[RMDB]
RNA sequence: GGGAACGACUCGAGUAGAGUCGAAAAUGGUAUUAUUGUUGGGUUCGUAACUCAAUAAAUUACCCUAGCGCUUAAAAACACUCACCUCCCGCAACCACUUCCGGGUAGGCUAUUUGGGGGUGUUGAGAAAGUAAAGUUUUUUCGAAAACUUUACUUUAAAAGAAACAACAACAACAAC
Reactivity to 2A3 in 0.01 (KOAc 150mM, MgCl2 10mM, bicine 150mM(pH8.5), 24C), signal-to-noise 6, nucleotides 027 to 126: u090g010g010u030a050u100u010a150u040u070g010u010u000g020g010g020u040u120c140g080u180a020a030c000u000c000a000a000u030a010a020a000u040u030a030c000c000c030u050a070g050c060g040c110u110u130a080a110a030a030a020c030a020c010u010c000a040c000c000u010c000c000c010g020c020a080a090c020c020a060c030u090u020c030c040g080g000g020u100a140g050g030c040u120a130u140u160u120g060g010g000g000g000u040g000u020u030g010a020g030
Reactivity to DMS in 0.01 (KOAc 150mM, MgCl2 10mM, bicine 150mM(pH8.5), 24C), signal-to-noise 6, nucleotides 027 to 126: u020g010g000u000a020u010u010a080u000u000g010u000u000g010g000g010u000u000c300g010u040a130a090c010u010c000a010a020u000a000a020a110u000u010a030c000c000c150u020a110g010c130g010c070u020u010a030a070a110a100a070c110a100c030u000c030a080c020c020u000c000c010c030g000c190a130a140c050c040a060c060u010u000c170c090g000g000g010u010a050g020g010c100u010a050u010u030u020g010g010g010g000g000u000g010u010u010g000a060g000

The record gives the reactivity of an RNA of 177 nucleotides to 2A3 and DMS.
For DMS the reverse transcriptase was MarathonRT.